[RMDB]
RNA sequence: GGGAACGACUCGAGUAGAGUCGAAAAGAGCAUAGUUCAGAGGCACGCCAUAUCCGUAUGUGCCUUCUGAACUAAGCUAUAUGGAUAUGGCAUCCAUUAAUCUUCUAGAUUAAUGGAUUGAACUAUAGAUAGUUGAGUCAUUCGUGACUUAGCUAUCAAAAGAAACAACAACAACAAC
Reactivity to DMS in 0.01 (KOAc 150mM, MgCl2 10mM, bicine 150mM(pH8.5), 24C), signal-to-noise 9, nucleotides 027 to 126: g010a030g010c020a110u010a000g000u000u000c000a010g000a040g000g010c010a020c010g020c200c130a100u030a060u050c190c190g000u020a080u020g020u000g000c000c000u010u020c010u000g000a010a010c020u000a000a020g010c000u000a050u020a060u010g010g000a130u010a030u010g000g000c050a030u000c000c000a000u000u000a010a000u000c000u000u050c220u050a050g000a010u000u000a000a000u000g000g000a010u000u010g010a070a080c040u000a040u010a090
Reactivity to 2A3 in 0.01 (KOAc 150mM, MgCl2 10mM, bicine 150mM(pH8.5), 24C), signal-to-noise 9, nucleotides 027 to 126: g090a000g000c010a020u010a010g000u000u000c000a000g000a000g020g000c010a000c010g000c020c010a070u070a100u200c070c070g100u150a140u220g020u030g000c000c000u080u040c010u010g000a000a000c000u000a000a000g000c000u010a010u020a040u150g100g010a030u030a030u090g020g000c010a000u000c000c000a000u000u000a000a000u000c030u300u080c150u200a050g000a000u000u000a000a000u000g000g000a000u000u050g000a010a000c000u010a000u030a120